Chemical mapping of a 177-nucleotide RNA with 2A3 and DMS. The RNA was probed in 150 mM KOAc, 10 mM MgCl2 and 150 mM bicine (pH 8.5) at 24 C. The 2A3 profile rests on 2,799 reads. Values cover nucleotides 27 to 126. For 2A3 the reverse transcriptase was SuperScript II with manganese.
RNA sequence: GGGAACGACUCGAGUAGAGUCGAAAAGGAUUAGAUACCCCGGUAGUCUUGGCUGUAAACGAUGAACACUAGGUUGGGGGGGCUUGUUCCUCCCAGCCGUAGCGAAAGCGUUAAGUGUUCCGCCUGGUUGUGAGUAUACGUUCGCGUAUACUCACAAAAAAGAAACAACAACAACAAC
Reactivity to 2A3 in 0.01 (KOAc 150mM, MgCl2 10mM, bicine 150mM(pH8.5), 24C), signal-to-noise 4, nucleotides 027 to 126: g090g020a110u120u160a050g050a060u220a170c000c000c010c040g050g020u060a040g010u020c050u060u070g030g020c000u050g070u170a080a090a040c090g120a130u150g010a010a000c010a000c010u010a040g000g030u010u000g000g010g000g010g000g000g030c070u120u140g090u130u050c000c000u000c000c000c000a000g000c000c000g000u000a020g000c000g030a060a000a010g000c000g010u040u150a020a000g010u010g000u000u000c000c000g020c000c000u070g060g000
Reactivity to DMS in 0.01 (KOAc 150mM, MgCl2 10mM, bicine 150mM(pH8.5), 24C), signal-to-noise 5, nucleotides 027 to 126: g020g000a120u020u010a050g000a140u020a140c030c000c000c020g010g010u020a060g000u000c040u000u010g010g000c040u010g010u010a060a070a130c160g000a130u010g000a020a020c010a010c000u000a160g000g020u000u000g000g000g000g010g020g020g010c050u070u020g020u050u000c000c010u000c000c010c010a000g000c000c010g000u010a030g000c000g000a120a080a200g000c020g000u010u010a030a090g010u000g000u000u000c000c070g010c020c010u000g010g010